Source: RMDB library M2RFPK, as collected in RNAgym.
Structure probing data (2A3) for a 207-nucleotide construct.
For 2A3, 689 sequencing reads were counted.
2A3 adducts were read by reverse transcription with SuperScript II with manganese.
The reactions ran in a buffer of 150 mM KOAc, 10 mM MgCl2 and 150 mM bicine (pH 8.5), at 24 C.
RNA sequence: GGGAACGACUCGAGUAGAGUCGAAAAAUGCCGAUCGGUAUGGAUGCCACCGUGACGGCUCAAUCACACAAGUGCCAACGAUAACGAGGCGCUCGCUAUUGCUGCGUAACUGACGGCCUGACGGUCUAAAACAGAUUCGUGUUCGCACGAAUCUGAAUCUCUCUGUGAACUUCGGUUCACAGAGAGAAAAAGAAACAACAACAACAAC
Reactivity to 2A3 in 0.01 (KOAc 150mM, MgCl2 10mM, bicine 150mM(pH8.5), 24C), signal-to-noise 2, nucleotides 027 to 156: a000u070g000c010c020g050a110u060c040g040g010u010a030u120g050g050a090u120g030c010c000a070c040c020g030u020g030a100c080g020g090c000u000c020a020a050u130c010a030c000a030c000a090a130g010u020g070c000c020a100a050c000g020a120u070a120a000c040g020a030g070g100c120g010c050u020c010g040c000u040a010u110u210g030c000u020g040c000g040u030a070a000c020u030g100a060c050g010g010c000c000u070g010a020c040g080g000u020c060u120a080a070a000a000c000a000g000a000u000u000c000g000u040g090u020u040c190g040c050a000c000g000a000a020u040c000u000g000a000a020